[RMDB]
Chemical mapping of a 177-nucleotide RNA with DMS and 2A3.

RNA sequence: GGGAACGACUCGAGUAGAGUCGAAAAUGUCGCUGACCAACGAUGCCAUCGAGCUGUUUGUCGACCGGGCACGCCGAGUGCGGUCGGAUUUUGCGAUUAAUGCCGAUACCGCGGUGACGGUCGGGGAGAAUAGUCUCUGAUUCGUCAGAGACUAUUCAAAAGAAACAACAACAACAAC
Reactivity to DMS in 0.01 (KOAc 150mM, MgCl2 10mM, bicine 150mM(pH8.5), 24C), signal-to-noise 9, nucleotides 027 to 126: u010g010u000c020g020c030u000g010a140c050c040a100a130c090g010a060u000g010c040c030a100u000c060g010a060g020c030u000g010u000u000u000g010u000c020g010a020c020c010g000g000g010c070a070c050g020c090c060g000a110g010u010g010c050g010g010u000c020g000g000a070u000u000u000u000g010c150g000a100u000u000a050a050u010g000c010c000g000a080u000a060c020c020g000c010g010g010u000g000a080c030g000g000u000c010g010g000g000g000a240
Reactivity to 2A3 in 0.01 (KOAc 150mM, MgCl2 10mM, bicine 150mM(pH8.5), 24C), signal-to-noise 9, nucleotides 027 to 126: u140g030u020c020g000c090u060g030a060c010c010a040a040c040g090a100u110g030c010c010a100u070c040g030a030g040c030u030g080u140u090u130g190u090c010g000a010c010c010g030g060g100c060a030c040g040c030c030g090a070g050u190g020c050g000g020u010c000g000g000a060u140u130u100u190g080c070g030a040u050u230a070a070u190g120c010c000g000a020u060a120c010c010g000c030g050g010u030g020a030c000g000g000u020c010g000g000g010g010a150
The data come from the RNA Mapping Database (RMDB), library OK2TRN.